[RMDB]
RNA sequence: GGGAACGACUCGAGUAGAGUCGAAAAAGUUGACUGUCGAUGUUGCUAACCCUAGCACUCCAGCCUACACUUUUACAACAGUGAAACCUGGCGCAGCAUUUAGUGUGUUAGCAUGCUAUAAUGGUCGCCCUCUAUGUAUGUUCGCAUACAUAGAGGGAAAAGAAACAACAACAACAAC
Reactivity to DMS in 0.01 (KOAc 150mM, MgCl2 10mM, bicine 150mM(pH8.5), 24C), signal-to-noise 7, nucleotides 027 to 126: a060g010u000u010g030a020c020u000g020u000c100g000a090u010g020u000u010g010c010u000a030a040c050c070c080u000a040g000c020a250c030u000c010c000a010g010c030c020u010a300c060a020c000u000u000u000u010a080c300a110a090c280a030g000u010g010a030a110a140c300c020u000g000g000c110g010c120a080g010c020a140u000u020u000a030g020u010g030u000g010u000u010a030g000c000a020u010g010c010u000a150u010a090a020u000g000g000u000c030g000
Reactivity to 2A3 in 0.01 (KOAc 150mM, MgCl2 10mM, bicine 150mM(pH8.5), 24C), signal-to-noise 6, nucleotides 027 to 126: a000g190u170u140g010a010c000u020g010u070c030g040a040u120g020u070u020g000c000u010a020a020c010c000c000u000a010g000c010a000c010u000c000c000a000g000c000c010u100a030c010a010c010u060u060u110u280a120c090a200a030c030a070g000u020g030a060a010a010c000c010u000g000g000c030g000c060a160g000c020a020u150u120u070a060g010u080g030u040g000u050u000a010g000c010a010u050g010c010u070a070u060a190a050u070g030g000u000c010g000

Source: RMDB library 15KREP, as collected in RNAgym.
An RNA of 177 nucleotides, treated with DMS and 2A3 and read out base by base.
For DMS the reverse transcriptase was MarathonRT.
Conditions: 150 mM KOAc, 10 mM MgCl2 and 150 mM bicine (pH 8.5), 24 C.